[RMDB]
RNA sequence: GGGAACGACUCGAGUAGAGUCGAAAAGAUAUGGAAUGUCCAUUUGACCGAAGAACAGGCUCGGAAACGAGCCUGGGAGGUCUGAUGGAGCAUUCCUAAGUCAAACAACAAGCUUCGGCUUGUUGAACAAAUAACGGAUCUUCGGAUCCGUUAUUUGAAAAGAAACAACAACAACAAC
Reactivity to DMS in 0.01 (KOAc 150mM, MgCl2 10mM, bicine 150mM(pH8.5), 24C), signal-to-noise 3, nucleotides 027 to 126: g010a040u010a300u020g020g000a000a020u010g000u000c000c000a030u000u000u000g000a010c000c000g000a110a170g000a130a200c010a010g000g010c010u000c000g010g010a060a120a220c020g000a000g020c000c000u000g000g020g010a080g020g010u000c000u000g000a010u000g010g000a080g020c020a010u000u000c000c000u010a040a080g010u000c020a180a160a300c000a010a010c000a010a000g000c000u000u010c300g030g020c010u010u000g020u000u010g020a110a290
Reactivity to 2A3 in 0.01 (KOAc 150mM, MgCl2 10mM, bicine 150mM(pH8.5), 24C), signal-to-noise 1, nucleotides 027 to 126: g010a030u120a070u210g000g000a000a000u010g010u030c000c000a000u000u020u050g000a000c000c000g130a300a010g000a100a000c020a020g000g000c030u010c000g030g000a070a080a090c000g000a010g120c000c020u010g050g030g000a020g000g000u010c000u010g000a010u020g000g000a050g070c010a010u000u010c000c000u000a120a000g010u020c050a080a180a160c010a000a010c000a020a000g000c010u070u300c300g240g000c030u000u100g000u010u010g010a050a030
Structure probing data (DMS and 2A3) for a 177-nucleotide construct. For 2A3, 2,892 sequencing reads were counted. High DMS reactivity at an A or C suggests that its Watson-Crick edge is free. Source: RMDB library TTRDES, as collected in RNAgym. The reactions ran in a buffer of 150 mM KOAc, 10 mM MgCl2 and 150 mM bicine (pH 8.5), at 24 C. 2A3 adducts were read by reverse transcription with SuperScript II with manganese. Values cover nucleotides 27 to 126.